[RMDB]
RNA sequence: GGGAACGACUCGAGUAGAGUCGAAAAGAUAUGGAUGGCUACUCCGAAGAACGUAUGAACUACUCGGAAACGAGCAUACGGGAGGAGGUCCAUCCUAAGUCAAAACGAUGCAGUUCGCUGCAUCGAACCCUUACGAACAGUUCGCUGUUCGUAAGGGAAAAGAAACAACAACAACAAC
Reactivity to DMS in 0.01 (KOAc 150mM, MgCl2 10mM, bicine 150mM(pH8.5), 24C), signal-to-noise 2, nucleotides 027 to 126: g000a040u000a050u010g000g000a010u000g000g000c130u010a200c000u010c000c010g030a080a170g000a150a110c030g000u000a000u000g000a190a180c300u030a270c020u000c010g000g000a020a020a040c010g000a020g030c000a010u000a000c020g000g020g010a030g020g010a000g000g000u020c020c000a010u000c000c000u010a000a010g000u020c010a040a020a090a180c010g010a020u000g000c000a030g020u010u010c250g000c000u000g000c020a010u000c000g000a060a050
Reactivity to 2A3 in 0.01 (KOAc 150mM, MgCl2 10mM, bicine 150mM(pH8.5), 24C), signal-to-noise 3, nucleotides 027 to 126: g000a000u010a000u070g000g010a010u010g020g000c050u280a300c000u300c030c020g130a240a080g010a060a000c000g010u010a010u020g050a100a110c090u260a210c040u300c010g000g000a010a020a000c010g000a020g000c000a000u010a010c000g000g020g010a090g000g000a000g010g000u000c000c000a010u010c000c000u000a000a000g000u000c050a000a000a090a140c010g010a010u010g000c010a000g040u100u140c270g070c180u010g000c000a000u000c000g000a000a010